[RMDB]
RNA sequence: GGGAACGACUCGAGUAGAGUCGAAAACGGGCGUCGAGUGCCGACUCGGUUUCGCCGUAGAUGCCGAGCAGUCCGUACCGCUUCCGACCGUAGACCAGCGGAACGACGGCGAUCCGCCGCGCACCGAGGGACGGCUCCUAUUCGUAGGAGCCGUCCCAAAAGAAACAACAACAACAAC
Reactivity to 2A3 in 0.01 (KOAc 150mM, MgCl2 10mM, bicine 150mM(pH8.5), 24C), signal-to-noise 1, nucleotides 027 to 126: c000g000g070g060c000g080u020c030g050a170g130u140g080c010c030g010a140c090u110c020g040g020u010u150u090c050g000c030c030g020u050a140g000a060u120g000c000c000g000a000g000c000a000g010u030c000c040g060u080a170c000c070g000c000u160u110c090c000g040a080c000c000g080u080a070g020a040c050c030a000g010c020g050g000a000a010c020g110a000c000g000g000c010g100a070u010c010c020g000c010c020g100c000g000c000a070c030c000g000a100
An RNA of 177 nucleotides, treated with 2A3 and read out base by base.